RNA sequence: GGGAACGACUCGAGUAGAGUCGAAAAAUUAUAGCCACUUUAACUUAUGGUUAACUAACUGCCAAGUUUACUCAGCGAAAUAAUUGCCCGUCGCGAUGUCACCAAAUCGCCACUGUGGCGCGAUUUCGCCCAACUAGAGUUUCGACUCUAGUUGGGCAAAAGAAACAACAACAACAAC
Reactivity to 2A3 in 0.01 (KOAc 150mM, MgCl2 10mM, bicine 150mM(pH8.5), 24C), signal-to-noise 1, nucleotides 027 to 126: a000u120u090a150u080a090g070c000c000a010c000u130u110u060a030a030c020u020u230a030u230g050g000u040u050a040a040c060u030a100a060c060u100g000c000c030a020a100g030u010u030u100a200c050u040c040a010g000c040g130a020a040a090u170a030a100u120u170g080c030c000c010g010u040c030g000c040g030a030u040g040u090c050a050c120c030a040a070a110u020c030g030c080c030a060c050u090g040u150g020g000c020g000c020g110a020u000u100u050c080
Reactivity to DMS in 0.01 (KOAc 150mM, MgCl2 10mM, bicine 150mM(pH8.5), 24C), signal-to-noise 1, nucleotides 027 to 126: a010u000u000a050u000a140g020c000c070a020c130u000u010u000a060a090c120u000u020a160u020g000g020u000u000a100a160c140u000a090a160c090u000g020c040c030a060a210g000u000u000u000a040c090u000c130a070g000c080g030a030a040a020u010a030a040u010u000g000c090c000c010g020u020c270g010c050g000a010u000g000u000c190a040c160c090a040a070a000u000c040g040c000c080a050c030u010g080u010g030g000c020g020c300g000a050u000u000u000c060